An RNA of 177 nucleotides, treated with 2A3 and DMS and read out base by base. For DMS the reverse transcriptase was MarathonRT. Values are in units of 0.01, from 0 to 300, in steps of 10. It was measured as part of the RMDB library M2PK50.
RNA sequence: GGGAACGACUCGAGUAGAGUCGAAAAGUGCGCUAUUUCGAUAGCGCACAAAGGCGGCGAGUCUCGCUCGGCGGCGCGCGACAGCGCGCAGCCCAGCCGGAACAUAACGCCACUUCGGUGGCGUUAAUGAGCAAUUACAAUUCGUUGUAAUUGCUCAAAAAGAAACAACAACAACAAC
Reactivity to 2A3 in 0.01 (KOAc 150mM, MgCl2 10mM, bicine 150mM(pH8.5), 24C), signal-to-noise 1, nucleotides 027 to 126: g000u020g000c000g000c000u020a010u020u150u080c060g090a020u020a010g000c000g000c010a000c020a000a000a000g010g010c020g020g030c040g020a030g020u000c020u040c080g000c010u000c010g000g000c000g000g000c000g000c000g000c020g130a090c110a150g020c020g020c000g020c000a000g010c000c000c000a000g010c030c040g080g030a090a000c020a050u080a010a000c010g000c010c000a010c010u030u080c240g050g000u000g000g000c030g000u010u000a000a010
Reactivity to DMS in 0.01 (KOAc 150mM, MgCl2 10mM, bicine 150mM(pH8.5), 24C), signal-to-noise 4, nucleotides 027 to 126: g010u000g020c010g000c010u000a010u000u000u010c170g000a020u000a000g010c000g010c010a010c000a010a080a170g010g000c020g000g000c010g000a050g000u000c010u000c140g000c020u000c190g000g010c010g010g010c010g030c010g020c020g020a150c300a240g010c000g000c010g040c010a010g000c000c000c090a030g020c010c060g010g000a070a060c120a140u000a010a000c000g000c000c000a010c000u000u010c180g020g010u000g000g010c000g010u000u000a000a060